RNA sequence: GGGAACGACUCGAGUAGAGUCGAAAAACACGUCAAGGCUAUCAUGGUUGACUUCGGUUAUGCCAAAUACCACGGUGGUCGAACAUAUCUUAGGUCUGUUAUUAUUUCCUUCUGUUCCAUGGUAAUCACUUUUGCCAAUCCGAGUCUGAAAAUGGCGCCCAAGGGUAAUAUUCGUAUUACCCUUGGGAAAAGAAACAACAACAACAAC
Reactivity to DMS in 0.01 (KOAc 150mM, MgCl2 10mM, bicine 150mM(pH8.5), 24C), signal-to-noise 2, nucleotides 027 to 156: a090c070a130c040g020u000c060a110a130g020g020c020u000a050u010c040a040u000g030g020u000u010g000a060c080u010u000c050g020g000u010u000a040u010g040c030c010a050a070a150u010a150c000c000a050c030g000g040u000g010g040u000c030g020a060a080c080a090u010a070u000c070u010u000a100g020g010u000c060u010g000u000u000a070u000u000a040u000u010u000c010c000u000u000c050u000g010u010u000c020c020a100u000g010g010u010a070a100u000c060a090c110u000u000u000u000g010c000c000a050a150u010c040c020g000a060g030u000c030u010g000a070a050a090a110u000g010g010c040g000
Reactivity to 2A3 in 0.01 (KOAc 150mM, MgCl2 10mM, bicine 150mM(pH8.5), 24C), signal-to-noise 4, nucleotides 027 to 156: a000c050a010c040g080u070c080a090a130g010g000c010u040a010u040c020a050u080g040g010u060u060g050a070c050u120u090c180g010g010u150u090a070u250g010c010c010a040a030a040u100a030c010c000a020c030g010g010u030g010g000u010c010g010a050a000c040a070u160a050u040c080u060u090a030g040g000u030c030u030g070u020u020a060u090u020a070u030u120u060c010c000u040u120c050u090g050u090u000c030c010a040u090g030g000u050a100a040u120c070a080c160u060u090u100u090g020c020c000a020a030u030c010c020g000a010g050u000c010u040g020a040a090a000a060u150g020g000c090g030